[RMDB]
RNA sequence: GGGAACGACUCGAGUAGAGUCGAAAAUGUCUUAACAACAUUCAUUGACGCAGCACGAGGCCCCGCAGGUGUGGAGUCUGAUGUUGAGACCAAUGAAAUUGUUGACUCUGUGCAGUAUGCUCAUAAACUACGUCUCUCUUCGGAGAGACGAAAAGAAACAACAACAACAAC
Reactivity to DMS in 0.01 (KOAc 150mM, MgCl2 10mM, bicine 150mM(pH8.5), 24C), signal-to-noise 6, nucleotides 027 to 129: u030g020u040c000u000u100a050a060c080a000a000c100a090u010u020c040a020u000u000g030a080c000g030c090a020g030c010a030c230g000a070g010g030c020c020c000c040g050c040a190g070g090u000g050u000g000g030a140g020u020c020u020g000a120u000g000u000u000g030a130g020a150c110c060a000a020u030g020a020a050a180u030u030g030u000u000g040a010c030u030c020u000g000u030g030c020a070g040u040a080u000g000c060u020c040a130u010a100a080a120c060u060a100
Reactivity to 2A3 in 0.01 (KOAc 150mM, MgCl2 10mM, bicine 150mM(pH8.5), 24C), signal-to-noise 6, nucleotides 027 to 129: u080g040u000c020u070u130a050a010c020a010a000c000a080u000u030c000a000u000u020g040a010c040g000c090a010g000c010a020c060g090a020g030g000c000c010c000c010g000c040a130g060g260u260g040u050g170g020a020g010u000c010u030g100a160u020g020u010u010g020a060g030a070c030c000a010a010u030g010a030a020a050u090u060g050u040u030g020a030c010u000c020u060g100u050g020c010a030g070u130a060u150g000c000u000c020a040u170a080a110a050c040u120a040

Structure probing data (DMS and 2A3) for a 170-nucleotide construct. 2A3 adducts were read by reverse transcription with SuperScript II with manganese. For DMS, 19,577 sequencing reads were counted. The RNA was probed in 150 mM KOAc, 10 mM MgCl2 and 150 mM bicine (pH 8.5) at 24 C. For DMS the reverse transcriptase was MarathonRT. For 2A3, 15,899 sequencing reads were counted. High DMS reactivity at an A or C suggests that its Watson-Crick edge is free. It was measured as part of the RMDB library 15KLIB.